[RMDB]
RNA sequence: GGGAACGACUCGAGUAGAGUCGAAAAAGUUGUUGCAGUUAAAGCGUUCGUAGUUGAUAUUGUUGUAUACAAUGCUCCUUCGGGUAGCGUUGUAUUCAUUUGUGGGAAUUUGUUUUCAAGUUCCCCUAAUGCUCUGAAAAUUCGUUUUCAGAGCAUUAAAAGAAACAACAACAACAAC
Reactivity to 2A3 in 0.01 (KOAc 150mM, MgCl2 10mM, bicine 150mM(pH8.5), 24C), signal-to-noise 2, nucleotides 027 to 126: a000g040u040u020g080u050u070g010c040a080g020u050u070a140a080a030g090c070g050u020u070c070g040u040a020g050u000u030g020a060u060a010u140u050g080u000u010g000u000a000u000a030c000a000a000u020g000c000u000c000c010u010u080c190g130g000g030u160a010g010c020g000u000u000g000u000a010u020u030c080a000u040u010u090g100u180g000g000g000a000a020u000u000u000g190u000u170u020u130c000a000a000g000u000u000c000c000c010c000u000
Reactivity to DMS in 0.01 (KOAc 150mM, MgCl2 10mM, bicine 150mM(pH8.5), 24C), signal-to-noise 2, nucleotides 027 to 126: a090g000u020u000g010u010u000g010c100a100g010u000u010a060a080a060g000c020g030u000u020c070g010u000a080g000u020u010g000a110u010a140u000u010g000u010u010g000u000a040u010a000c000a000a000u000g010c010u000c000c000u020u030c160g020g010g010u030a000g010c000g040u000u000g000u000a010u000u010c080a080u010u030u020g000u020g020g000g000a020a010u000u000u010g000u010u010u010u020c010a000a000g010u000u010c000c000c000c030u010